[RMDB]
RNA sequence: GGGAACGACUCGAGUAGAGUCGAAAAGUACGGCCGGCCCGUCGAUGAGCGUACCACGGCCGGCGCUCAUAUGCGCCUAGAGUAGCGCACUCUAUGAUCAUCGGCCAUGGUACACACGUGAUCUGGCGGAUUCCUAAAGGUUCGCCUUUAGGAAUCCAAAAGAAACAACAACAACAAC
Reactivity to DMS in 0.01 (KOAc 150mM, MgCl2 10mM, bicine 150mM(pH8.5), 24C), signal-to-noise 2, nucleotides 027 to 126: g000u000a030c120g020g010c030c070g000g030c090c030c030g010u000c050g020a060u000g000a120g010c050g010u000a030c010c000a030c060g020g000c010c000g010g010c080g000c090u000c030a000u000a040u000g000c020g030c010c000u000a090g000a170g010u000a100g010c020g030c030a090c300u000c270u000a020u000g000a000u000c010a030u000c020g000g010c000c000a030u000g000g000u000a010c010a030c040a100c130g010u010g010a110u000c020u000g000g000c230
Reactivity to 2A3 in 0.01 (KOAc 150mM, MgCl2 10mM, bicine 150mM(pH8.5), 24C), signal-to-noise 1, nucleotides 027 to 126: g070u070a040c040g050g000c050c090g120g060c020c010c000g030u020c030g040a230u090g050a030g080c060g000u000a000c000c000a000c000g000g000c000c000g010g000c000g010c000u000c000a030u050a020u070g010c020g010c010c040u150a130g030a100g290u260a030g030c010g000c000a000c010u100c020u030a030u020g000a020u000c010a000u030c030g000g000c000c020a010u020g000g020u000a000c010a000c010a000c030g120u120g040a160u040c020u020g000g000c000

Background:
Chemical mapping of a 177-nucleotide RNA with DMS and 2A3. The data come from the RNA Mapping Database (RMDB), library OK2TRN. The reactions ran in a buffer of 150 mM KOAc, 10 mM MgCl2 and 150 mM bicine (pH 8.5), at 24 C. 2A3 adducts were read by reverse transcription with SuperScript II with manganese.